[RMDB]
Chemical mapping of a 207-nucleotide RNA with DMS and 2A3.
DMS adducts were read by reverse transcription with MarathonRT.
High 2A3 reactivity points to a flexible backbone, as in loops and unpaired stretches.
For 2A3 the reverse transcriptase was SuperScript II with manganese.
The data come from the RNA Mapping Database (RMDB), library OK3TST.
For DMS, 2,024 sequencing reads were counted.
RNA sequence: GGGAACGACUCGAGUAGAGUCGAAAAGUUAAAAAGUGUAUAUGUUGAAUGGAUUCACACACAGUAGCCAACAAUGACCACAUUGUCGGCCCGUGUACAACGCGUAUUGAAACGCAGCGCCCAGACUUCAACUAAUCUGCCCUCAAUAAAGCUGAAAAUGCUCACUAUCAUUCGUGAUAGUGAGCAUAAAAGAAACAACAACAACAAC
Reactivity to DMS in 0.01 (KOAc 150mM, MgCl2 10mM, bicine 150mM(pH8.5), 24C), signal-to-noise 1, nucleotides 027 to 156: g010u000u000a010a040a070a130a100g030u020g000u020a140u000a090u030g020u000u000g000a110a070u000g000g000a140u000u010c100a110c000a060c010a000c020a160g060u020a030g030c010c010a030a000c010a000a010u010g000a130c250c160a120c000a080u000u000g030u000c000g020g010c000c010c030g060u010g010u000a110c010a020a050c000g000c010g000u020a240u010u020g030a080a080a100c000g000c030a070g020c010g030c040c000c020a130g010a050c040u030u010c010a020a070c070u030a070a100u000c010u000g040c050c020c030u010c020a030a110u000a010a030a090g000c030u000g000a070a090a100
Reactivity to 2A3 in 0.01 (KOAc 150mM, MgCl2 10mM, bicine 150mM(pH8.5), 24C), signal-to-noise 2, nucleotides 027 to 156: g050u060u080a120a020a000a000a030g080u070g060u050a060u010a040u280g020u020u000g010a030a070u060g030g030a040u140u130c100a050c000a000c000a000c010a130g090u140a020g020c000c000a000a010c010a030a000u010g060a100c030c040a100c070a290u000u000g010u000c010g000g000c000c000c010g040u000g020u020a040c030a050a010c060g000c000g050u000a080u070u150g090a150a160a000c010g030c010a010g050c010g010c030c000c010a040g060a080c000u000u020c030a000a000c000u020a000a100u050c010u040g010c010c000c000u050c000a040a090u090a270a070a000g000c070u050g090a080a120a010